[RMDB]
RNA sequence: GGGAACGACUCGAGUAGAGUCGAAAACUGACUUGGAAAGUCGCAGCGCAGCUUUUAUGAAAACUAAGGUUGCUUUCUCUCAAAAGAACGCGACUGAACGUAAACAUAAAGAAGUCAACGUCAUUCACUCUGUAGCGUAGUUCGCUACGCUACAGAGAAAAGAAACAACAACAACAAC
Reactivity to 2A3 in 0.01 (KOAc 150mM, MgCl2 10mM, bicine 150mM(pH8.5), 24C), signal-to-noise 1, nucleotides 027 to 126: c000u010g020a010c010u030u060g030g130a210a000a020g040u030c030g000c060a090g090c030g020c050a010g010c000u120u090u040u000a040u070g040a070a150a040a000c020u000a030a020g050g010u000u010g000c000u050u040u000c030u020c000u000c040a050a030a000a030g010a020a010c010g000c000g030a000c000u020g020a020a000c020g000u030a010a170a000c000a030u040a040a070a020g080a000a000g080u030c020a100a020c020g100u060c030a170u170u090c030a080
Reactivity to DMS in 0.01 (KOAc 150mM, MgCl2 10mM, bicine 150mM(pH8.5), 24C), signal-to-noise 2, nucleotides 027 to 126: c050u020g010a030c090u030u000g010g000a130a130a060g010u000c000g000c020a080g050c150g010c060a150g000c010u000u000u000u000a020u010g010a060a110a160a020c100u020a020a170g000g010u000u000g000c000u000u010u000c010u000c070u000c260a160a050a210a030g000a020a080c080g000c000g000a010c020u010g000a050a090c210g000u000a040a070a180c050a010u010a010a020a050g010a230a130g030u020c050a060a090c090g000u000c040a100u010u000c120a090